[RMDB]
RNA sequence: GGGAACGACUCGAGUAGAGUCGAAAAGGAGGAAAGGUCGGUCGUGACGGAGCUUGAAGUUCUCGUCGGCGAACUUGUUGCCGUAGAUGGACUUGCCGCCAGUGCCGUUGUGGUUGGUGAACUAAAAUGGUGAGUGUCAGCGCAAAACAGUCCGGCGGCUAGUGUAAGCAUUCGUGCUUACACUAGCAAAAGAAACAACAACAACAAC
Reactivity to 2A3 in 0.01 (KOAc 150mM, MgCl2 10mM, bicine 150mM(pH8.5), 24C), signal-to-noise 2, nucleotides 027 to 156: g040g040a010g010g000a090a030a030g020g030u100c010g030g020u050c050g050u060g010a020c050g030g010a020g040c030u090u200g110a110a030g020u040u040c100u020c020g070u010c030g010g000c010g020a040a060c040u060u090g050u120u140g090c020c030g050u050a030g010a090u130g040g010a020c000u020u050g010c020c020g010c040c000a050g040u030g100c010c040g020u030u040g060u060g060g020u040u060g010g040u050g020a060a040c050u140a060a030a030a120u160g000g010u040g040a090g010u050g030u040c020a020g000c000g000c050a040a060a030a050c010a040g070u060c030c030g020g000c010g020
Reactivity to DMS in 0.01 (KOAc 150mM, MgCl2 10mM, bicine 150mM(pH8.5), 24C), signal-to-noise 2, nucleotides 027 to 156: g000g020a060g020g000a080a050a050g030g030u000c050g040g020u000c030g030u000g040a040c040g010g000a050g010c020u010u020g010a100a090g040u000u000c030u000c010g030u000c020g050g030c060g000a050a100c100u010u000g010u010u000g030c000c040g020u000a100g010a100u010g000g010a050c020u000u010g000c030c010g010c050c020a110g020u020g040c020c030g010u000u000g040u020g040g030u000u020g040g030u000g000a060a140c070u060a040a060a060a040u000g030g000u000g000a180g020u010g000u000c060a130g000c040g030c060a030a030a050a080c090a140g000u000c010c040g000g010c050g020